This 207-nucleotide RNA was probed chemically with 2A3 and DMS.

RNA sequence: GGGAACGACUCGAGUAGAGUCGAAAAGCCGAUGAAUUGCCGAGAAGCCUGGCUCGAAAGCGUCGACGCAUCGACGACGGUCCUGCCAUGAGACCGUAACGAGGACAUGUCGCCUCGAAUGGCGUCGUAUAACAUGAGUGGUUCGCCACUCAUGUAACUCAACUACAUUAUUCGUAAUGUAGUUGAGAAAAGAAACAACAACAACAAC
Reactivity to 2A3 in 0.01 (KOAc 150mM, MgCl2 10mM, bicine 150mM(pH8.5), 24C), signal-to-noise 9, nucleotides 027 to 156: g040c020c020g010a040u110g060a060a200u160u130g040c030c030g030a040g020a120a020g010c040c080u080g030g000c020u030c040g080a110a070a020g050c020g020u030c010g020a040c050g010c080a080u050c020g030a030c010g010a010c000g000g000u000c000c010u060g080c030c020a090u100g010a030g010a130c020c010g010u040a020a010c020g010a000g000g020a010c040a130u200g050u170c090g030c020c010u010c010g020a040a040u060g030g020c000g010u040c030g000u070a090u050a180a010c000a000u000g000a000g000u000g020g030u040u080c190g040c060c000a000c000u000c000a000u000g000u000a000a000
Reactivity to DMS in 0.01 (KOAc 150mM, MgCl2 10mM, bicine 150mM(pH8.5), 24C), signal-to-noise 5, nucleotides 027 to 156: g040c000c000g010a080u010g000a120a110u010u010g020c060c010g010a120g000a100a140g000c050c020u000g030g000c070u000c050g010a090a090a100g010c050g010u000c010g010a060c040g010c060a120u010c020g010a030c020g020a070c010g000g000u000c010c000u000g040c050c180a120u000g010a070g010a050c020c020g000u000a030a100c040g010a080g020g010a130c040a090u010g020u000c030g010c000c000u000c030g020a080a070u000g000g030c030g030u010c020g010u000a070u000a110a060c000a000u000g000a010g040u000g010g020u010u010c300g010c030c000a010c000u000c000a000u000g010u000a030a110
Source information: The DMS profile rests on 17,587 reads. For DMS the reverse transcriptase was MarathonRT. The reactions ran in a buffer of 150 mM KOAc, 10 mM MgCl2 and 150 mM bicine (pH 8.5), at 24 C. For 2A3 the reverse transcriptase was SuperScript II with manganese. High DMS reactivity at an A or C suggests that its Watson-Crick edge is free. For 2A3, 16,609 sequencing reads were counted.